[RMDB]
RNA sequence: GGGAACGACUCGAGUAGAGUCGAAAAAUUGAUUUGAGACGUCGCCUUGCAGUGUUAACUUGGCUCUCAUGAACCUCUUUGAUCUUCCACAAAGGGUAGGCUACGGGAGAAACCUCUUAGGCUAAAAGACCUCGUAUAACUUCGGUUAUACGAGGUCAAAAGAAACAACAACAACAAC
Reactivity to DMS in 0.01 (KOAc 150mM, MgCl2 10mM, bicine 150mM(pH8.5), 24C), signal-to-noise 1, nucleotides 027 to 126: a080u010u000g010a130u000u000u010g000a100g010a110c130g020u000c080g000c020c010u000u010g000c100a130g020u010g000u020u000a020a060c030u000u000g000g000c030u000c020u000c040a110u000g000a090a140c090c000u010c000u000u000u000g020a070u000c090u000u000c070c100a110c060a020a060a030g000g000g000u000a040g000g000c050u000a080c180g000g000g000a090g020a070a050a090c020c020u000c040u000u000a110g010g020c060u020a030a080a180a140

This 177-nucleotide RNA was probed chemically with DMS. It was measured as part of the RMDB library M2PK90.